[RMDB]
Overview:
Conditions: 150 mM KOAc, 10 mM MgCl2 and 150 mM bicine (pH 8.5), 24 C. Chemical mapping of a 207-nucleotide RNA with DMS and 2A3. The DMS profile rests on 24,124 reads. As a SHAPE reagent, 2A3 marks flexible, mostly unpaired nucleotides at the ribose 2'-OH. For 2A3, 17,365 sequencing reads were counted. For 2A3 the reverse transcriptase was SuperScript II with manganese.
RNA sequence: GGGAACGACUCGAGUAGAGUCGAAAACAAAACGAGCGGUGGAUGGAAAGAUUGUCGACACGUUGCCAGCGCUGCUGAAACCAGUGCCACGGUUGAUACAAUAUCUGAGUUCUUAUGCUAGGUUAGUCGAUAUUUGGAUUUUUGGCUCGAUGAUGCAGAAUUAGAGCUAAUUCGUUAGCUCUAAUUCAAAAGAAACAACAACAACAAC
Reactivity to DMS in 0.01 (KOAc 150mM, MgCl2 10mM, bicine 150mM(pH8.5), 24C), signal-to-noise 7, nucleotides 027 to 156: c050a050a080a090a100c070g010a100g020c030g020g030u000g010g020a100u000g010g010a110a090a120g000a100u000u000g020u000c020g020a060c050a080c070g020u000u000g010c040c030a140g010c020g030c040u010g020c020u000g010a130a110a100c280c040a080g020u000g010c020c040a080c060g000g020u000u010g010a130u010a070c070a060a090u000a050u000c020u010g010a120g020u000u000c060u000u010a080u000g010c020u000a080g020g010u000u000a090g020u000c040g020a070u000a050u000u000u000g010g010a140u000u000u000u000u000g020g020c020u000c030g030a100u010g010a120u000g000c050a150
Reactivity to 2A3 in 0.01 (KOAc 150mM, MgCl2 10mM, bicine 150mM(pH8.5), 24C), signal-to-noise 9, nucleotides 027 to 156: c020a000a070a010a020c050g030a020g040c030g030g060u070g040g030a080u060g020g050a070a050a040g060a060u050u090g020u040c020g020a010c010a010c090g040u030u040g030c030c020a040g010c070g000c070u090g000c020u080g040a120a050a030c030c010a020g010u010g040c010c010a050c060g010g010u020u030g020a030u050a100c060a110a050u030a040u140c040u070g050a030g090u120u010c030u090u140a070u150g020c020u030a030g050g050u070u060a020g020u050c030g030a030u010a090u100u070u090g100g010a090u050u040u030u040u140g050g000c010u020c040g060a060u130g020a020u120g030c100a030